[RMDB]
RNA sequence: GGGAACGACUCGAGUAGAGUCGAAAAACGGAGAGUCCACCGACACGGCAUCCGCAGCCACCGAGGGCCACCGGGGCGAGAUCGACGCCGCGGGAGAGCCGGACGAACGCGGUGCCGCCGUGGCUGAGCCUCGGCGGGGAUUCGUCCCCGCCGAGGCAAAAGAAACAACAACAACAAC
Reactivity to 2A3 in 0.01 (KOAc 150mM, MgCl2 10mM, bicine 150mM(pH8.5), 24C), signal-to-noise 1, nucleotides 027 to 126: a010c020g010g000a030g010a020g100u000c000c000a050c010c060g040a060c080a020c080g040g010c010a030u120c040c000g000c000a080g100c090c000a100c030c000g070a140g000g070g010c000c000a020c000c000g120g020g030g000c050g000a120g100a150u070c060g060a130c030g010c000c000g290c030g080g070g000a300g040a030g080c010c010g000g010a000c050g000a100a000c080g000c000g030g000u020g000c000c020g000c000c000g020u010g000g020c060u140g000a000

An RNA of 177 nucleotides, treated with 2A3 and read out base by base. For 2A3, 579 sequencing reads were counted. The RNA was probed in 150 mM KOAc, 10 mM MgCl2 and 150 mM bicine (pH 8.5) at 24 C. The data come from the RNA Mapping Database (RMDB), library OK1LIB. 2A3 adducts were read by reverse transcription with SuperScript II with manganese.